[RMDB]
RNA sequence: GGGAACGACUCGAGUAGAGUCGAAAAGACUUCAUUAUGCAGUGCUGUGGAGAGAGUGUGAUUGGUUUUUGUCUAUGAUAUUUCUGUGUCAUAUGUUAUUUUAGUGCCAAGUUCUUCCUGUUAUUUCAGAUAUUCUGUCACUGAUUUACUUAUUGUACGAUAUAGGUCGGUUCGCCGACCUAUAUCGAAAAGAAACAACAACAACAAC
Reactivity to DMS in 0.01 (KOAc 150mM, MgCl2 10mM, bicine 150mM(pH8.5), 24C), signal-to-noise 1, nucleotides 027 to 156: g030a080c020u000u000c080a120u010u000a070u000g040c020a110g000u000g020c060u010g040u020g020g020a140g020a080g010a070g000u000g010u020g000a170u010u000g020g030u000u000u000u010u000g020u000c030u010a110u010g010a110u000a060u000u000u000c090u010g020u010g050u010c020a050u000a060u010g020u010u010a060u000u000u010u010a060g030u010g000c110c030a080a140g010u000u000c060u000u000c060c020u010g030u000u000a080u000u000u010c050a260g020a150u000a050u000u000c050u000g000u000c040a110c040u000g000a090u010u000u000a060c060u010u000a060u000u010g030u020a100
Reactivity to 2A3 in 0.01 (KOAc 150mM, MgCl2 10mM, bicine 150mM(pH8.5), 24C), signal-to-noise 4, nucleotides 027 to 156: g040a010c050u060u020c120a080u080u210a060u140g020c040a030g050u010g020c010u010g000u050g050g030a050g010a010g010a020g020u030g010u040g040a130u040u080g030g060u060u020u020u060u050g030u010c020u040a050u050g040a030u030a080u080u180u060c100u110g090u010g020u030c010a040u020a040u110g040u090u050a070u050u100u030u120a060g010u020g000c020c000a060a060g040u040u050c020u050u040c030c010u030g040u170u040a150u060u130u060c000a010g010a030u030a050u140u070c040u050g030u040c020a000c070u000g040a040u000u020u090a050c040u090u070a120u190u190g030u130a030